[RMDB]
RNA sequence: GGGAACGACUCGAGUAGAGUCGAAAAUCGAUUUGCUCGUUUUGCGAGAGCAGUUUGCCGAUGGAUUCACGAAUAGAAGGAUGCCAGCUCACGGCACGACUCACCGCGUCGUUGAGCGUCAGGCUACCCUCAAUGUAUACUUCGGUAUACAUUGAGGAAAAGAAACAACAACAACAAC
Reactivity to DMS in 0.01 (KOAc 150mM, MgCl2 10mM, bicine 150mM(pH8.5), 24C), signal-to-noise 8, nucleotides 027 to 126: u010c040g010a100u000u000u000g010c010u000c020g010u000u000u010u010g020c150g010a110g000a060g010c020a050g010u010u010u000g010c070c020g010a080u000g010g000a190u000u010c050a070c120g000a090a100u000a100g010a090a080g000g010a130u010g000c010c010a200g000c020u000c020a020c010g010g000c010a040c000g010a120c160u000c180a140c180c010g010c050g010u000c000g010u000u000g010a010g010c010g010u000c150a070g010g000c010u010a120c100
Reactivity to 2A3 in 0.01 (KOAc 150mM, MgCl2 10mM, bicine 150mM(pH8.5), 24C), signal-to-noise 6, nucleotides 027 to 126: u080c000g020a030u050u030u100g010c010u010c040g090u070u040u150u270g110c100g050a120g000a000g070c010a010g030u060u090u110g100c030c030g020a050u050g030g030a050u050u080c060a040c130g110a110a080u140a220g110a170a030g070g040a030u090g070c010c010a010g000c010u010c010a010c010g000g000c010a010c010g050a060c020u130c100a090c100c040g000c000g000u000c000g010u020u060g010a000g000c010g050u060c050a020g020g000c000u060a080c010

The record gives the reactivity of an RNA of 177 nucleotides to DMS and 2A3. For 2A3 the reverse transcriptase was SuperScript II with manganese. It was measured as part of the RMDB library RFMREP. The DMS profile rests on 12,227 reads. The 2A3 profile rests on 13,328 reads. Reactivities are given for positions 27 through 126.